[RMDB]
RNA sequence: GGGAACGACUCGAGUAGAGUCGAAAAGAUAUGGAGAGAGCUCGAUAAGAUGGGAUCGGAAACGAUCCGCAUCUUUUGACGAGCGCUCCUAAGUCAAAACAAGAUCGAGGUUCGCCUCGAUCUUGAAGGCAUUGUAUCGGUUCGCCGAUACAAUGCCAAAAGAAACAACAACAACAAC
Reactivity to DMS in 0.01 (KOAc 150mM, MgCl2 10mM, bicine 150mM(pH8.5), 24C), signal-to-noise 1, nucleotides 027 to 126: g010a040u000a300u000g000g010a000g000a040g020a130g010c000u000c000g060a100u000a030a020g000a010u000g020g010g000a000u010c010g000g040a160a080a190c020g000a020u000c000c000g050c020a000u000c040u000u000u000u000g000a170c060g000a020g010c000g000c000u010c000c000u000a040a040g010u000c050a030a080a070a150c000a010a020g000a000u000c000g000a010g000g020u010u010c220g040c000c030u000c010g000a000u000c000u010u010g000a070a080